Chemical mapping of a 177-nucleotide RNA with 2A3 and DMS.
For 2A3 the reverse transcriptase was SuperScript II with manganese.
RNA sequence: GGGAACGACUCGAGUAGAGUCGAAAACAUAGCUAUCAUCUGAGAUGUACCAGCAUGUCAAAUAGCAUACGUGCCAUACUAUAAUAUGAUCAGAUGCAUCACGUCAUGAGACACGGCACUGUAACAAGCGUGGUACGAGGUUCGCUUCGUGCCACGCAAAAGAAACAACAACAACAAC
Reactivity to 2A3 in 0.01 (KOAc 150mM, MgCl2 10mM, bicine 150mM(pH8.5), 24C), signal-to-noise 9, nucleotides 027 to 126: c040a060u180a040g000c010u020a000u040c020a030u030c040u040g020a020g010a060u040g020u090a130c050c020a030g050c010a010u030g060u090c020a020a070a150u050a020g010c030a050u040a050c020g010u000g000c000c000a070u050a100c070u100a060u070a180a120u110a040u110g030a020u020c030a030g040a140u070g040c020a060u080c050a010c080g040u020c020a060u190g090a030g020a090c020a010c060g010g000c000a010c060u070g020u050a080a060c040a140a020
Reactivity to DMS in 0.01 (KOAc 150mM, MgCl2 10mM, bicine 150mM(pH8.5), 24C), signal-to-noise 7, nucleotides 027 to 126: c110a070u040a120g000c030u000a030u000c050a060u020c080u010g010a040g010a020u000g000u010a110c230c240a100g000c020a020u020g000u020c080a040a070a070u000a040g020c030a190u010a030c060g020u000g020c010c000a180u030a090c140u020a070u020a050a090u010a040u000g010a060u010c040a110g010a110u010g010c110a030u010c080a060c110g000u000c030a090u020g000a080g010a090c150a070c150g000g000c000a010c000u020g010u020a070a120c200a050a090
For DMS, 16,215 sequencing reads were counted.
For DMS the reverse transcriptase was MarathonRT.